[RMDB]
RNA sequence: GGGAACGACUCGAGUAGAGUCGAAAAGAUAUGGAGUAGGGUAUGGACGAAGAACGCUAUCGGAAACGAUAGCGGGAGUCCUACCUACUCCUAAGUCAAAACCCCUGUCGGUUCGCCGACAGGGGAACCAUAGUAUGUUGUUCGCAACAUACUAUGGAAAAGAAACAACAACAACAAC
Reactivity to 2A3 in 0.01 (KOAc 150mM, MgCl2 10mM, bicine 150mM(pH8.5), 24C), signal-to-noise 6, nucleotides 027 to 126: g010a000u030a020u070g000g000a000g000u010a020g060g040g100u250a180u300g110g000a000c010g080a250a060g010a030a000c010g000c010u000a010u010c000g010g000a030a020a010c000g000a000u000a000g010c010g000g000g010a000g000u010c000c000u020a100c000c000u000a000c000u000c000c000u010a000a000g010u000c010a030a060a130a300c010c000c000c000u000g010u000c000g010g100u060u110c300g060c160c000g000a000c000a000g000g010g000g000a000a000
Reactivity to DMS in 0.01 (KOAc 150mM, MgCl2 10mM, bicine 150mM(pH8.5), 24C), signal-to-noise 5, nucleotides 027 to 126: g000a020u000a230u010g000g000a030g020u000a020g000g010g010u020a070u010g050g020a020c010g000a120a200g000a140a260c030g000c000u010a010u000c000g010g000a080a050a080c000g010a020u000a000g000c000g000g000g000a030g010u000c000c000u010a080c000c000u000a010c000u000c000c000u000a000a050g010u000c010a120a090a120a170c000c000c000c000u010g010u000c000g010g000u010u010c250g010c000c000g000a000c000a010g000g010g010g000a000a010
Overview:
An RNA of 177 nucleotides, treated with 2A3 and DMS and read out base by base. For DMS, 11,743 sequencing reads were counted. Conditions: 150 mM KOAc, 10 mM MgCl2 and 150 mM bicine (pH 8.5), 24 C. Values cover nucleotides 27 to 126. 2A3 adducts were read by reverse transcription with SuperScript II with manganese.